[RMDB]
RNA sequence: GGGAACGACUCGAGUAGAGUCGAAAAAGGCACUGCAUGCUCAUGUGAAUAAUGCUCAACCAAGACAAGGAAAAAGUGUGCACAUCCCGGACUGGGGGCACAUUAGUUUUAACUAAUGAUGUGUAAAGCAGUUAGCUGUAUUCGUACAGCUAACUGCAAAAGAAACAACAACAACAAC
Reactivity to 2A3 in 0.01 (KOAc 150mM, MgCl2 10mM, bicine 150mM(pH8.5), 24C), signal-to-noise 1, nucleotides 027 to 126: a000g130g000c040a030c070u060g020c070a020u050g010c030u050c050a050u030g030u040g100a140a070u170a170a030u090g030c020u010c050a030a110c020c020a000a050g100a120c020a040a020g000g030a040a100a000a010a130g080u050g000u020g010c020a000c040a020u100c010c000c020g060g080a080c130u100g000g000g050g080g000c050a000c000a000u000u000a010g000u000u100u060u100a010a070c020u000a000a020u020g060a050u010g040u000g040u050a110a120a000
Reactivity to DMS in 0.01 (KOAc 150mM, MgCl2 10mM, bicine 150mM(pH8.5), 24C), signal-to-noise 1, nucleotides 027 to 126: a040g000g010c040a110c040u010g030c060a180u010g020c040u000c090a180u000g030u010g000a050a070u000a060a130u010g000c000u020c110a070a150c060c050a000a090g020a020c220a110a130g000g040a050a090a100a040a060g020u000g010u000g000c020a030c120a040u000c000c030c020g010g000a060c090u000g000g000g000g020g000c060a060c000a010u000u000a010g010u000u000u030u000a060a100c010u000a000a000u000g000a060u000g000u000g010u040a040a120a110